[RMDB]
RNA sequence: GGGAACGACUCGAGUAGAGUCGAAAAGCGGGUGGGGUCGGUGCUCAGGAGCGGGUGGGGCCUGCCGGUCUCCCUAGCCCACCACCAGGUUUCCUCUGUAUCCCCGCAGCACUUGGCAAGGUCCAGGAUUCGAGGAUUAUUUCGAUAAUCCUCGAAUAAAAGAAACAACAACAACAAC
Reactivity to DMS in 0.01 (KOAc 150mM, MgCl2 10mM, bicine 150mM(pH8.5), 24C), signal-to-noise 2, nucleotides 027 to 126: g020c070g020g000g030u010g010g000g000g010u000c120g050g010u000g020c050u010c160a110g010g010a060g020c050g010g000g020u000g020g020g010g000c020c020u010g000c090c070g010g000u000c020u020c010c020c010u000a090g010c020c010c020a090c070c010a040c030c040a060g030g000u000u010u000c020c010u000c030u000g020u010a140u000c030c000c000c090g000c070a080g000c120a080c030u010u000g000g000c030a140a110g030g000u010c000c030a050g010g000
Reactivity to 2A3 in 0.01 (KOAc 150mM, MgCl2 10mM, bicine 150mM(pH8.5), 24C), signal-to-noise 1, nucleotides 027 to 126: g080c030g000g050g190u280g030g090g050g000u180c080g030g000u070g020c040u010c080a070g010g120a040g030c050g050g010g080u230g010g010g060g000c020c010u020g020c020c060g000g020u000c000u000c000c000c000u000a030g000c020c010c000a010c000c000a020c000c030a030g060g010u040u040u010c020c010u010c000u080g040u070a110u100c000c000c000c000g000c000a040g040c010a000c040u070u030g040g070c070a190a160g020g000u000c020c030a010g000g060